This 207-nucleotide RNA was probed chemically with 2A3 and DMS. For 2A3 the reverse transcriptase was SuperScript II with manganese. DMS adducts were read by reverse transcription with MarathonRT. The reactions ran in a buffer of 150 mM KOAc, 10 mM MgCl2 and 150 mM bicine (pH 8.5), at 24 C.

[RMDB]
RNA sequence: GGGAACGACUCGAGUAGAGUCGAAAAUCCUAAGUCUCUAUAACUUUGAGGGUGGUGGGAGUAGGAUCGGAAACGAUCCUACGAGGAUCACCACCUACCCACCAAAGCUAAUAGAGAUAUGGAAAAACGGAAAGUUAAGAUUCGUCUUAACUUUCCGGUUUUUGUACCGUUUCGACGGUACAAAAACAAAAGAAACAACAACAACAAC
Reactivity to 2A3 in 0.01 (KOAc 150mM, MgCl2 10mM, bicine 150mM(pH8.5), 24C), signal-to-noise 2, nucleotides 027 to 156: u020c010c000u040a140a020g040u030c010u000c010u010a010u000a060a020c000u020u000u000g020a030g000g020g000u020g000g000u010g000g010g000a090g000u000a000g000g010a000u010c000g000g060a070a080a040c000g010a000u010c020c010u010a000c000g000a000g000g030a030u060c030a040c010c000a000c000c000u000a000c000c030c010a130c050c030a000a000a000g000c010u060a100a010u000a050g000a000g000a000u010a010u040g010g010a060a130a070a030a040c020g000g000a000a000a000g000u000u000a010a000g010a010u020u130c220g050u000c090u000u000a000a000c000u000u000u010c000c010g000
Reactivity to DMS in 0.01 (KOAc 150mM, MgCl2 10mM, bicine 150mM(pH8.5), 24C), signal-to-noise 1, nucleotides 027 to 156: u000c020c010u010a070a200g020u010c000u010c010u000a020u000a010a050c020u000u010u000g000a180g020g000g000u010g020g050u030g000g040g000a240g040u000a020g000g000a020u010c010g010g000a170a180a280c020g040a000u000c000c000u020a010c020g000a080g020g010a100u000c010a020c000c000a020c020c000u010a000c050c000c050a300c090c000a010a010a020g000c020u000a140a090u010a010g000a030g000a010u000a120u000g020g020a100a010a100a120a250c000g010g010a000a010a020g000u000u000a030a000g020a040u010u010c300g010u000c010u000u000a000a000c000u000u000u010c000c000g000